[RMDB]
RNA sequence: GGGAACGACUCGAGUAGAGUCGAAAAGUGCGUAACAGCUCACCCGUCGAGGUCAGGGGCCCCGAAAAUGGACGGGGCUUAAGCCGGCCGCCGAGACCCCGGCGCACGGACCGAUUGGUCCGUGAUCGGGUAGGCGGGCGUGCCGAUGGGGCGGAAGGACUGUAUAGUACUUCGGUACUAUACAGUCAAAAGAAACAACAACAACAAC
Reactivity to 2A3 in 0.01 (KOAc 150mM, MgCl2 10mM, bicine 150mM(pH8.5), 24C), signal-to-noise 2, nucleotides 027 to 156: g040u040g000c000g070u080a070a070c010a110g020c010u020c020a070c010c010c010g010u010c010g020a070g040g070u080c070a050g000g000g060g010c020c010c010c000g080a040a080a000a170u190g050g030a030c010g010g000g000g000c000u010u010a020a000g000c000c000g050g030c020c000g010c000c010g050a080g040a140c010c010c010c010g030g050c140g020c030a000c000g000g000a000c010c010g270a300u090u300g000g010u000c000c000g000u000g000a010u070c000g000g000g000u010a030g000g000c000g020g030g000c020g050u100g020c020c000g000a010u020g020g020g000g020c030g000g010a050a030g120
Reactivity to DMS in 0.01 (KOAc 150mM, MgCl2 10mM, bicine 150mM(pH8.5), 24C), signal-to-noise 1, nucleotides 027 to 156: g020u010g030c040g000u000a090a070c050a110g000c030u000c010a090c010c000c000g010u000c020g000a050g030g020u010c020a210g000g000g010g000c000c000c000c000g020a060a100a130a210u010g000g010a120c000g060g040g010g070c070u000u000a030a190g020c030c040g020g000c000c040g010c000c000g000a200g020a110c060c010c020c000g040g040c200g000c010a010c030g000g010a050c000c000g010a250u010u000g060g050u010c040c000g050u000g000a050u000c000g000g050g040u000a040g030g000c000g000g010g010c020g000u010g020c020c000g000a090u000g010g010g050g050c080g000g000a220a180g000

An RNA of 207 nucleotides, treated with 2A3 and DMS and read out base by base. For DMS the reverse transcriptase was MarathonRT.